Background: The data come from the RNA Mapping Database (RMDB), library PDB130. Structure probing data (DMS and 2A3) for a 207-nucleotide construct. The reactions ran in a buffer of 150 mM KOAc, 10 mM MgCl2 and 150 mM bicine (pH 8.5), at 24 C.
RNA sequence: GGGAACGACUCGAGUAGAGUCGAAAAAUGAUACAUAGCCGACCUGAGAGGGUGAUCGGCCACAUUGGGACUGAGACACGGCCCAAACUCCUACGGGAGGCAGCAGUAGGGAAUCUUCGGCAAUGGACGAAAGUCUGACCGAGCAACGCCGCGUGAGGUGAAUUUGUAUGUUCGCAUACAAAUUCACAAAAGAAACAACAACAACAAC
Reactivity to DMS in 0.01 (KOAc 150mM, MgCl2 10mM, bicine 150mM(pH8.5), 24C), signal-to-noise 1, nucleotides 027 to 156: a120u000g040a200u000a090c030a170u010a070g020c000c000g020a080c060c030u000g040a190g000a170g020g040g060u000g000a140u000c030g010g010c000c010a010c080a150u000u030g020g030g050a080c030u020g010a160g000a160c040a100c030g030g000c020c010c020a040a120a080c030u010c010c000u000a070c170g040g030g020a070g000g000c020a030g040c060a100g020u000a090g000g010g000a040a080u000c020u020u010c050g030g000c000a040a110u010g000g000a000c010g040a100a100a140g000u010c030u000g000a070c050c020g000a030g000c060a030a090c030g040c000c020g000c000g000u010g050a180g000
Reactivity to 2A3 in 0.01 (KOAc 150mM, MgCl2 10mM, bicine 150mM(pH8.5), 24C), signal-to-noise 3, nucleotides 027 to 156: a010u060g010a010u040a120c070a000u140a070g030c000c000g030a070c000c020u060g020a050g030a030g050g030g030u050g030a110u050c020g000g050c010c000a050c010a050u040u030g040g010g080a090c000u050g050a030g020a110c060a030c090g030g000c000c000c000a030a050a060c030u030c010c020u020a030c120g040g000g020a030g000g030c000a020g020c010a010g010u140a050g000g050g040a060a130u030c040u070u070c110g000g000c050a050a120u120g030g000a010c020g040a100a040a010g010u000c010u020g140a050c000c010g010a000g060c030a030a060c050g050c040c040g040c030g070u080g060a040g040